An RNA of 177 nucleotides, treated with 2A3 and DMS and read out base by base. Values are in units of 0.01, from 0 to 300, in steps of 10. The 2A3 profile rests on 6,842 reads. DMS adducts were read by reverse transcription with MarathonRT. It was measured as part of the RMDB library TTRDEL.
RNA sequence: GGGAACGACUCGAGUAGAGUCGAAAAGAUAUGGACAUCGUACCUCGCUCGCAACCCCGUCGGAAACGACGCGACGUACGAGUGUCCUAAGUCAAAAGAUCUUGAAGACUUCGGUCUUCAAGAUCAACCAGAUUGGUUAGUUCGCUAACCAAUCUGGAAAAGAAACAACAACAACAAC
Reactivity to 2A3 in 0.01 (KOAc 150mM, MgCl2 10mM, bicine 150mM(pH8.5), 24C), signal-to-noise 3, nucleotides 027 to 126: g030a020u040a060u150g020g000a000c000a020u020c010g000u000a000c010c030u000c010g010c000u050c030g110c030a060a180c020c000c030c110g300u270c160g090g000a070a060a020c010g020a020c130g030c000g010a000c020g010u000a000c020g000a090g160u080g000u000c000c000u000a140a050g070u000c030a000a010a070a210g000a000u010c000u000u000g000a010a000g000a000c010u060u150c300g040g000u000c010u000u000c000a000a000g000a000u000c000a000a000
Reactivity to DMS in 0.01 (KOAc 150mM, MgCl2 10mM, bicine 150mM(pH8.5), 24C), signal-to-noise 4, nucleotides 027 to 126: g010a050u010a300u010g010g000a010c000a070u000c010g020u010a000c020c110u000c000g000c010u000c100g010c070a040a300c010c000c110c300g000u010c140g000g000a070a190a100c000g010a010c150g010c000g020a010c220g000u000a000c000g010a050g000u000g000u000c010c010u000a020a070g000u010c040a070a080a140a100g000a010u000c000u000u000g000a010a010g000a020c000u010u010c190g040g020u000c000u000u000c000a010a020g000a000u000c010a030a100